[RMDB]
Structure probing data (2A3 and DMS) for a 177-nucleotide construct.
DMS adducts were read by reverse transcription with MarathonRT.
The reactions ran in a buffer of 150 mM KOAc, 10 mM MgCl2 and 150 mM bicine (pH 8.5), at 24 C.
DMS (dimethyl sulfate) methylates the pairing face of unpaired adenines and cytosines.
The data come from the RNA Mapping Database (RMDB), library OK2TST.
RNA sequence: GGGAACGACUCGAGUAGAGUCGAAAAUUGGAGAAGAACAAGCCCAAGGUCAUGGUGCAAGCCAGUUUAAUUUCUUCAAUGGAAUACUGAGCAGUGCUUAAUUGGUAAAUAAGCUAAUCUACCGUGCCGUUGUUAGAAGCUUCGGCUUCUAACAACGAAAAGAAACAACAACAACAAC
Reactivity to 2A3 in 0.01 (KOAc 150mM, MgCl2 10mM, bicine 150mM(pH8.5), 24C), signal-to-noise 1, nucleotides 027 to 126: u000u070g030g050a090g040a120a120g010a090a020c010a000a040g020c000c020c000a020a050g060g070u040c010a010u060g010g000u030g000c000a060a000g000c000c010a000g000u020u060u080a050a020u050u010u010c010u080u110c100a070a300u170g040g030a040a030u060a100c020u000g010a050g010c020a020g100u030g120c000u000u040a090a100u080u050g110g070u140a080a050a060u060a120a000g020c000u010a020a070u070c040u020a010c000c000g040u020g000c000
Reactivity to DMS in 0.01 (KOAc 150mM, MgCl2 10mM, bicine 150mM(pH8.5), 24C), signal-to-noise 2, nucleotides 027 to 126: u010u000g010g020a110g010a070a140g000a090a090c070a050a080g020c020c010c010a090a090g000g000u010c040a020u000g000g000u000g000c120a150a110g020c000c010a060g010u020u000u020a050a040u000u000u000c000u010u010c260a120a060u020g000g020a020a070u000a090c020u000g010a110g000c080a140g020u000g030c000u010u040a030a070u000u010g010g030u020a040a060a090u020a040a030g020c070u010a020a050u000c070u010a070c040c030g020u000g020c100